[RMDB]
RNA sequence: GGGAACGACUCGAGUAGAGUCGAAAAGGCCUCUUUCCAGGUCCGGAGUCUACUUCCAUCUGGACCACCCGGGCCUUCUUCGCCGGGGGCGCCCCUUCUCCGUCCCUAUCCUUCUUUCCGAUUAUUCGUAUGCAAUUUAGUUCGCUAAAUUGCAUACAAAAGAAACAACAACAACAAC
Reactivity to DMS in 0.01 (KOAc 150mM, MgCl2 10mM, bicine 150mM(pH8.5), 24C), signal-to-noise 3, nucleotides 027 to 126: g010g010c030c020u000c110u000u010u020c060c080a130g000g000u000c020c010g010g010a060g010u000c110u010a100c170u010u020c100c120a150u000c060u010g010g010a020c060c020a090c190c070c060g000g010g020c010c040u010u000c030u000u000c090g020c040c090g000g010g000g010g030c080g000c040c030c000c020u010u000c040u010c030c010g010u000c010c010c020u010a100u000c030c020u000u000c050u000u000u000c000c010g000a150u020u000a150u010u000c140
Reactivity to 2A3 in 0.01 (KOAc 150mM, MgCl2 10mM, bicine 150mM(pH8.5), 24C), signal-to-noise 2, nucleotides 027 to 126: g040g010c010c020u050c030u060u130u020c060c040a030g030g010u000c000c030g000g020a020g020u040c090u120a070c070u220u050c040c000a110u050c030u060g000g010a010c000c010a030c010c020c020g030g020g000c010c000u050u020c020u040u040c020g070c000c010g000g000g010g010g050c020g020c010c010c000c000u030u050c020u010c010c000g040u020c000c000c000u030a050u050c000c020u030u050c000u060u050u020c030c010g100a110u070u090a090u130u200c040